The record gives the reactivity of an RNA of 177 nucleotides to DMS and 2A3. High DMS reactivity at an A or C suggests that its Watson-Crick edge is free. For DMS, 21,946 sequencing reads were counted. 2A3 adducts were read by reverse transcription with SuperScript II with manganese. Conditions: 150 mM KOAc, 10 mM MgCl2 and 150 mM bicine (pH 8.5), 24 C. The data come from the RNA Mapping Database (RMDB), library OK2TST. For DMS the reverse transcriptase was MarathonRT.

RNA sequence: GGGAACGACUCGAGUAGAGUCGAAAAAUGAUGCCUUCAUCGAAAGUGAUGACACCAUCGCCGAUUAUGGUGCCGUCUCCAAUAUGAAUGAUUGCCCCGGUUAAUGCGAUCGGUCCACUUUGGUCCGUCAAUCCAUGUUAUUCGUAACAUGGAUUGAAAAAGAAACAACAACAACAAC
Reactivity to DMS in 0.01 (KOAc 150mM, MgCl2 10mM, bicine 150mM(pH8.5), 24C), signal-to-noise 9, nucleotides 027 to 126: a070u000g010a080u000g010c050c030u000u000c020a020u000c060g010a110a130a170g010u000g000a020u000g010a040c020a010c010c000a030u000c110g010c120c140g000a100u010u000a040u000g010g020u000g010c020c000g010u000c000u010c020c040a070a160u010a050u000g000a040a040u000g010a090u000u000g010c030c010c010c030g000g010u010u010a070a090u010g020c100g000a060u010c030g010g010u000c010c020a100c210u000u010u000g020g010u000c020c020g010
Reactivity to 2A3 in 0.01 (KOAc 150mM, MgCl2 10mM, bicine 150mM(pH8.5), 24C), signal-to-noise 9, nucleotides 027 to 126: a000u170g060a040u150g020c010c010u020u040c010a010u010c030g080a110a060a050g050u050g020a020u030g010a010c010a010c020c010a020u040c040g130c170c050g080a060u120u050a030u160g020g000u000g000c010c010g010u000c010u000c010c010a050a030u110a060u170g090a120a030u080g030a070u040u120g040c010c000c000c010g020g040u090u160a140a040u160g050c050g040a030u080c040g010g010u000c010c010a070c070u150u150u180g010g000u020c000c010g010